The record gives the reactivity of an RNA of 177 nucleotides to DMS and 2A3. It was measured as part of the RMDB library OK1LIB. DMS adducts were read by reverse transcription with MarathonRT. The 2A3 profile rests on 1,761 reads. The reactions ran in a buffer of 150 mM KOAc, 10 mM MgCl2 and 150 mM bicine (pH 8.5), at 24 C. In probing experiments dimethyl sulfate is read out at A N1 and C N3, which are open when not base-paired. 2A3 adducts were read by reverse transcription with SuperScript II with manganese. Reactivities are given for positions 27 through 126. For DMS, 1,560 sequencing reads were counted.
[RMDB]
RNA sequence: GGGAACGACUCGAGUAGAGUCGAAAAACAACAGCAAGUGGAACAAGCAUCACGUUCAGGCUGCCCAUCAUUUACUCAGAUACAUUCGGGGUACCUUGGAUUACUGCCUCACCUUUGAUGCUGAGGCUGCACCUGAUGGAUUCGUCCAUCAGGUGCAAAAAGAAACAACAACAACAAC
Reactivity to DMS in 0.01 (KOAc 150mM, MgCl2 10mM, bicine 150mM(pH8.5), 24C), signal-to-noise 2, nucleotides 027 to 126: a040c160a050a270c130a070g000c040a080a070g100u000g000g020a000a090c050a170a090g020c070a050u000c060a080c300g000u000u040c010a070g020g000c000u000g030c040c000c000a040u000c140a020u050u020u030a040c050u020c060a050g000a020u010a120c140a120u070u020c010g140g000g010g040u000a070c140c010u010u000g000g000a080u020u020a100c260u000g010c010c010u020c050a020c100c020u000u000u230g000a000u000g000c150u000g010a000g070g000c040
Reactivity to 2A3 in 0.01 (KOAc 150mM, MgCl2 10mM, bicine 150mM(pH8.5), 24C), signal-to-noise 4, nucleotides 027 to 126: a000c040a000a050c000a000g050c050a140a060g230u170g200g090a080a000c090a060a020g080c010a030u100c020a050c110g000u020u030c020a050g020g020c000u050g030c000c010c000a040u070c020a010u070u090u060a080c010u010c030a000g050a150u090a210c050a100u070u100c070g020g010g000g000u000a000c000c030u020u100g060g020a040u110u220a160c030u120g020c000c000u000c010a030c010c020u220u180u260g110a130u160g010c040u070g000a000g020g000c000